RNA sequence: GGGAACGACUCGAGUAGAGUCGAAAAGAAAGUUAGGGGAUCGAAGAUGAUUAGAUACCGUUGUAGUCCUAACCAUAAACUUUACUAUCCAAGAGUUGGAUUAGUUAUUUUAUACUCUUCCAGUACUUCUAAGUAUUUGGUUCGCCAAAUACUUAGAAAAAGAAACAACAACAACAAC
Reactivity to DMS in 0.01 (KOAc 150mM, MgCl2 10mM, bicine 150mM(pH8.5), 24C), signal-to-noise 2, nucleotides 027 to 126: g010a140a120a050g010u000u000a040g000g000g000g000a080u020c070g020a090a200g010a060u000g010a070u000u010a110g000a140u030a070c060c080g010u000u000g010u010a190g000u010c020c010u010a060a080c040c130a080u000a050a040a060c090u000u000u000a100c030u010a080u010c020c000a040a120g000a150g020u010u000g000g000a040u000u000a020g000u000u010a080u000u000u000u000a080u000a040c050u000c040u000u000c020c020a100g020u000a090c150u000
Reactivity to 2A3 in 0.01 (KOAc 150mM, MgCl2 10mM, bicine 150mM(pH8.5), 24C), signal-to-noise 2, nucleotides 027 to 126: g080a040a050a020g000u020u050a010g000g010g000g020a020u130c020g030a020a020g060a100u140g000a040u110u110a090g050a080u090a220c000c010g000u040u080g020u050a010g010u010c010c010u020a020a000c020c010a010u110a050a040a040c000u040u130u080a100c020u050a050u000c020c010a020a030g060a140g230u070u020g000g000a000u000u020a040g000u060u000a040u070u190u000u030a080u020a020c010u040c010u020u030c000c020a020g040u030a020c030u000
This 177-nucleotide RNA was probed chemically with DMS and 2A3.
Values cover nucleotides 27 to 126.
For DMS, 1,407 sequencing reads were counted.
The 2A3 profile rests on 1,205 reads.
The data come from the RNA Mapping Database (RMDB), library RFMREP.
DMS adducts were read by reverse transcription with MarathonRT.
The RNA was probed in 150 mM KOAc, 10 mM MgCl2 and 150 mM bicine (pH 8.5) at 24 C.
Values are in units of 0.01, from 0 to 300, in steps of 10.